Source: RMDB library OK3TST, as collected in RNAgym. The record gives the reactivity of an RNA of 207 nucleotides to 2A3. Values cover nucleotides 27 to 156. For 2A3 the reverse transcriptase was SuperScript II with manganese.
RNA sequence: GGGAACGACUCGAGUAGAGUCGAAAAUCAUCGUCAUCGAUAACUGUAGUCUUGGGCUUCUUUUUGCGGCUCUUCAUUCCGGAACGCACAUUGGUGCUAUCCAUUUAGGUAGUAAAAAAUAAGUCAGAAUAUGCCCUAUAGCACGAUCGUGCAAAACAGAUGGAGAUGUCUUCGGACAUCUCCAUCUAAAAGAAACAACAACAACAAC
Reactivity to 2A3 in 0.01 (KOAc 150mM, MgCl2 10mM, bicine 150mM(pH8.5), 24C), signal-to-noise 1, nucleotides 027 to 156: u050c020a020u010c000g090u080c080a070u030c020g180a090u080a160a090c050u120g070u110a060g030u060c050u080u030g030g020g000c020u010u000c000u020u080u020u020u030g060c010g030g000c070u040c000u020u040c050a090u060u020c010c080g000g000a040a080c070g010c000a010c000a110u000u100g120g000u030g040c000u000a050u120c060c030a120u160u090u050a020g000g050u010a000g030u150a060a050a030a000a000a030u180a020a020g050u040c020a000g070a050a020u040a050u140g030c020c020c000u040a070u020a040g000c000a000c030g050a020u040c080g020u000g000c000a000a010a000a100c090